[RMDB]
RNA sequence: GGGAACGACUCGAGUAGAGUCGAAAAGAAGGUGGGUCAGGGCUCGGACCGCACCUAUUAGAUGUAACUAUUCCGAGCCCAUUAAUGGCGUUUUCGCCUAGGUCAGAGCACGCCGUGGCUCGACCAAAAUAAAUAAAUAAUAGCACGGCGGAUAGAACCAUUAAUAUAUGUUCGCAUAUAUUAAUGGAAAAGAAACAACAACAACAAC
Reactivity to 2A3 in 0.01 (KOAc 150mM, MgCl2 10mM, bicine 150mM(pH8.5), 24C), signal-to-noise 3, nucleotides 027 to 156: g090a020a020g010g010u020g000g030g010u010c060a080g010g010g000c010u000c000g000g000a000c010c020g080c030a010c010c000u000a080u060u230a020g020a030u090g070u120a070a090c050u070a150u160u100c030c000g010a000g000c000c000c000a010u010u120a060a060u040g010g000c010g060u090u020u160u260c020g030c010c000u000a030g000g000u000c060a110g000a000g000c000a000c010g000c010c000g000u000g000g000c000u000c000g000a000c000c000a030a020a000a000u050a010a030a000u160a010a030a020u170a030a040u040a050g010c000a000c010g000g000c120g000g000a020u130a110g120a040a060
Reactivity to DMS in 0.01 (KOAc 150mM, MgCl2 10mM, bicine 150mM(pH8.5), 24C), signal-to-noise 2, nucleotides 027 to 156: g000a180a090g020g030u000g020g020g020u000c050a110g030g040g020c000u000c000g020g000a060c170c200g010c020a020c010c010u000a100u010u000a120g010a090u000g020u000a070a130c030u000a250u000u000c040c010g000a060g020c000c010c020a110u010u010a070a110u000g010g000c020g020u000u010u020u000c000g030c000c000u010a060g040g020u000c020a090g040a060g050c020a080c010g020c060c030g070u000g020g000c020u000c040g000a030c030c000a000a070a040a100u000a040a060a100u000a050a030a100u010a090a210u010a140g010c020a000c000g010g020c030g020g000a180u010a090g010a180a190